This 207-nucleotide RNA was probed chemically with 2A3 and DMS. Source: RMDB library ARCHII, as collected in RNAgym.
[RMDB]
RNA sequence: GGGAACGACUCGAGUAGAGUCGAAAACUUCUAAUCUAGCUAGAAUCUUUCAAGCUGUAAUCUUUGCUAGAUGCUCUUUUUGUCAUACCUUAGCAAAAAGAAAAGAAUAAGGUUGCUUGUGGGAUUUAUCUUGGGGUGUUGGAUAACCACGAAAAGACAUAUGUUAUUAGUUCGCUAAUAACAUAUGAAAAGAAACAACAACAACAAC
Reactivity to 2A3 in 0.01 (KOAc 150mM, MgCl2 10mM, bicine 150mM(pH8.5), 24C), signal-to-noise 3, nucleotides 027 to 156: c010u060u000c000u070a060a030u030c000u000a010g000c000u000a010g020a070a060u050c050u090u220u160c180a130a030g050c090u090g120u150a070a080u060c050u070u120u100g000c000u000a010g000a020u000g010c010u020c000u010u030u000u010u000g040u030c010a040u030a170c020c030u080u040a020g000c000a020a000a000a010a000g000a000a080a020a010g090a050a070u120a090a000g010g000u010u010g020c000u060u070g010u010g010g040g070a110u080u150u040a060u100c030u060u130g050g010g000g080u050g030u100u050g010g010a010u030a040a060c020c000a010c040g020a010a110a000a010g100a000
Reactivity to DMS in 0.01 (KOAc 150mM, MgCl2 10mM, bicine 150mM(pH8.5), 24C), signal-to-noise 2, nucleotides 027 to 156: c090u010u000c030u050a180a090u000c020u000a020g030c020u000a110g020a080a050u020c070u020u000u010c040a070a090g030c060u010g030u010a040a140u000c010u000u010u010g000c030u000a040g020a050u000g010c070u000c000u000u010u000u000u000g020u010c020a080u000a180c060c090u000u000a110g010c010a040a020a030a030a030g000a070a100a110a190g000a180a090u000a080a070g000g000u000u000g010c000u010u000g050u000g000g000g000a130u010u000u000a030u010c080u000u000g020g010g050g020u000g010u000u000g020g000a080u000a130a100c020c000a050c050g010a130a080a110a140g010a240
Conditions: 150 mM KOAc, 10 mM MgCl2 and 150 mM bicine (pH 8.5), 24 C. For 2A3, 1,370 sequencing reads were counted. For DMS, 3,648 sequencing reads were counted.